About this RNA
Chemical mapping of a 177-nucleotide RNA with DMS. For DMS the reverse transcriptase was MarathonRT. Conditions: 150 mM KOAc, 10 mM MgCl2 and 150 mM bicine (pH 8.5), 24 C.
[RMDB]
RNA sequence: GGGAACGACUCGAGUAGAGUCGAAAAGCACCGCCGCAGUGCAGCCAACCUCCUACCGCACACACGCUGCCCGAGCCUGCUUCUGUCGCAGUCUUACCCGGUCCGGGGCCGGACCCGGGUAGGCGUAAGGAUGCUCAUCAUUCGUGAUGAGCAUCCUAAAAGAAACAACAACAACAAC
Reactivity to DMS in 0.01 (KOAc 150mM, MgCl2 10mM, bicine 150mM(pH8.5), 24C), signal-to-noise 1, nucleotides 027 to 126: g010c000a070c040c030g020c040c080g010c060a120g030u000g030c060a120g030c020c030a110a120c120c020u030c010c020u020a110c080c050g000c030a080c040a120c060a090c080g000c070u000g020c110c020c020g000a150g020c020c030u000g020c020u020u000c070u000g000u010c050g020c100a140g000u030c000u000u000a050c000c000c000g040g010u000c000c010g000g000g030g020c260c030g020g000a010c050c020c030g000g000g000u010a000g000g000c030g000u020a050